[RMDB]
RNA sequence: GGGAACGACUCGAGUAGAGUCGAAAAUGGAAGAUAAUUGUCUGAAGGAUUUGUGUGACUGUGGAUCGCUUGAAAGGCUGAACCUUUCUUAUUGUAUUCAGCUGACAGAUAUCAAUCCACUCUCCAGUCUACUGUUGACAUUCGUGUCAACAGUAGAAAAAGAAACAACAACAACAAC
Reactivity to DMS in 0.01 (KOAc 150mM, MgCl2 10mM, bicine 150mM(pH8.5), 24C), signal-to-noise 7, nucleotides 027 to 126: u010g000g000a060a130g010a030u010a040a070u010u020g000u000c030u010g000a090a100g010g000a070u010u010u020g010u010g020u010g020a080c060u020g000u010g020g000a040u000c070g010c090u000u000g020a060a100a080g000g020c030u010g020a040a160c170c040u000u000u020c080u010u020a080u030u020g010u020a110u000u010c010a010g000c020u010g000a090c060a020g000a080u010a040u010c050a070a090u010c000c000a030c070u010c080u010c010c070a130g010
Reactivity to 2A3 in 0.01 (KOAc 150mM, MgCl2 10mM, bicine 150mM(pH8.5), 24C), signal-to-noise 9, nucleotides 027 to 126: u090g020g020a040a030g020a030u070a100a080u220u070g030u030c040u050g090a110a070g040g050a060u060u130u110g130u060g040u080g060a060c060u060g020u050g100g040a060u020c030g050c130u020u050g070a110a060a020g030g000c060u060g030a070a070c010c000u050u150u100c050u060u160a210u110u150g040u040a080u010u030c000a010g010c010u040g010a010c010a010g060a030u030a000u100c030a060a090u010c010c010a010c020u020c010u000c010c000a020g040